Source: RMDB library OK3TST, as collected in RNAgym. An RNA of 207 nucleotides, treated with 2A3 and DMS and read out base by base. The DMS profile rests on 1,714 reads. For 2A3, 1,766 sequencing reads were counted.

RNA sequence: GGGAACGACUCGAGUAGAGUCGAAAAAAUACUGUCCAUGUGGAAGUUACCUUUUAUCUUUACCAGUAUUAACACAUAAAUGGUUAUACAUAAAUACAUUGACCACCUUUUAUUACUCCAGCUAUAGUGGGGAAAACUUUCUUUUCAUAACUAGCUAGAUUUAAAUCGGAUUCGUCCGAUUUAAAUCAAAAGAAACAACAACAACAAC
Reactivity to 2A3 in 0.01 (KOAc 150mM, MgCl2 10mM, bicine 150mM(pH8.5), 24C), signal-to-noise 3, nucleotides 027 to 156: a000a000u170a010c050u050g010u030c010c000a040u060g020u050g030g060a130a160g000u070u060a070c010c000u030u080u070u060a080u070c060u050u080u120a130c060c030a030g090u050a090u180u240a120a030c050a010c010a050u080a090a130a030u050g010g040u040u040a060u020a160c030a030u220a090a130a020u100a020c010a040u040u060g020a000c010c000a050c050c000u040u170u050u050a110u130u080a070c020u000c020c010a000g010c020u030a030u070a170g070u130g010g010g000g000a000a060a010a050c020u080u110u060c010u040u080u010u060c040a040u060a200a080c010u010a050g080c010u010a020
Reactivity to DMS in 0.01 (KOAc 150mM, MgCl2 10mM, bicine 150mM(pH8.5), 24C), signal-to-noise 1, nucleotides 027 to 156: a080a050u000a040c060u020g010u000c050c040a080u040g000u010g010g000a240a110g030u000u000a100c060c030u020u020u000u030a050u010c000u010u000u000a080c040c010a100g020u000a100u000u000a030a120c000a040c080a070u000a010a090a060u000g020g010u040u000a050u020a060c020a160u000a090a050a100u010a100c060a080u030u000g010a090c000c000a000c010c010u000u010u000u010a060u000u000a150c040u000c030c010a030g020c060u000a090u000a110g040u000g010g010g010g000a060a050a050a170c060u000u000u000c000u000u010u000u000c050a130u000a100a120c110u000a030g020c060u010a250

The reactions ran in a buffer of 150 mM KOAc, 10 mM MgCl2 and 150 mM bicine (pH 8.5), at 24 C. For DMS the reverse transcriptase was MarathonRT. Reactivities are given for positions 27 through 156.